Chemical mapping of a 207-nucleotide RNA with 2A3. The reactions ran in a buffer of 150 mM KOAc, 10 mM MgCl2 and 150 mM bicine (pH 8.5), at 24 C. For 2A3, 346 sequencing reads were counted. 2A3 is a SHAPE reagent: it acylates the 2'-hydroxyl of flexible nucleotides of all four kinds.

[RMDB]
RNA sequence: GGGAACGACUCGAGUAGAGUCGAAAAGGCGAAUCAGAAAGGGCUUCGAGAUGCUGAGGCCAGAAUUUUUGAGUGACAGGCGAGUCCCGCAUCAUCAUGUCCACGCCGAAUAUGAUAUCGGCUUUGAUGGCUUCAUGAAUAGCCACAACCACAUCGGUCCCCUUAAAACCUUCGGGUUUUAAGGGGAAAAAGAAACAACAACAACAAC
Reactivity to 2A3 in 0.01 (KOAc 150mM, MgCl2 10mM, bicine 150mM(pH8.5), 24C), signal-to-noise 1, nucleotides 027 to 156: g000g000c000g120a080a030u060c090a020g170a040a080a080g020g000g000c030u000u060c160g100a160g020a210u090g030c050u030g020a020g060g030c020c020a030g050a020a050u040u040u040u150u250g040a060g080u030g080a060c080a160g010g070c000g050a030g100u020c030c020c000g000c000a030u050c000a000u020c000a010u030g030u020c000c010a060c090g000c000c000g010a050a050u180a030u060g150a010u020a060u080c030g030g040c010u110u060u000g100a110u020g000g000c000u060u050c100a140u080g200a120a120u140a090g060c000c000a010c020a000a000c010c000a130c000a060u080c040g010g020